[RMDB]
Structure probing data (2A3 and DMS) for a 207-nucleotide construct. It was measured as part of the RMDB library RNAMAK. For DMS, 8,815 sequencing reads were counted. Conditions: 150 mM KOAc, 10 mM MgCl2 and 150 mM bicine (pH 8.5), 24 C.
RNA sequence: GGGAACGACUCGAGUAGAGUCGAAAAGCGUACUACUAGCAAUGAUGCCCAUGGUAGCGAUAAGUAGCUCCCAAAUAGGAGCUACUUUUGACGCUGAGAGUGGGUUGAGCUAGUAUCGCAAAACUCAGUCAGGAAUCUUCGGAUUCCUGACUGAGAACGACAUACAUAGGUUCGCCUAUGUAUGUCGAAAAGAAACAACAACAACAAC
Reactivity to 2A3 in 0.01 (KOAc 150mM, MgCl2 10mM, bicine 150mM(pH8.5), 24C), signal-to-noise 4, nucleotides 027 to 156: g000c010g050u080a050c030u000a000c000u000a030g020c010a040a300u130g040a030u100g060c000c010c000a010u060g060g110u190a000g000c010g010a030u010a050a000g000u000a000g000c000u050c020c020c010a240a300a060u300a150g000g000a000g000c000u000a000c000u000u010u000u040g010a010c000g010c010u030g050a100g000a030g190u000g000g000g000u010u040g020a010g000c030u010a000g000u000a000u140c010g000c010a020a030a030a070c000u000c000a000g010u000c000a000g000g000a000a000u000c010u060u190c300g090g000a000u000u000c000c000u010g000a000c000u000g000a000g000a000a010
Reactivity to DMS in 0.01 (KOAc 150mM, MgCl2 10mM, bicine 150mM(pH8.5), 24C), signal-to-noise 3, nucleotides 027 to 156: g020c010g030u000a100c070u010a010c000u010a000g010c010a110a040u050g010a090u000g000c000c000c010a070u000g030g030u010a050g020c000g010a140u000a020a030g030u000a010g000c000u010c000c010c020a050a230a300u010a050g010g010a000g010c000u010a010c010u000u000u000u000g040a240c060g020c000u000g000a110g020a240g030u000g010g010g020u010u000g000a090g040c000u000a030g000u000a010u000c010g010c010a080a040a100a140c000u000c000a000g010u000c000a010g000g000a030a010u000c000u000u000c300g060g020a040u010u000c010c000u000g000a000c000u010g010a010g010a020a080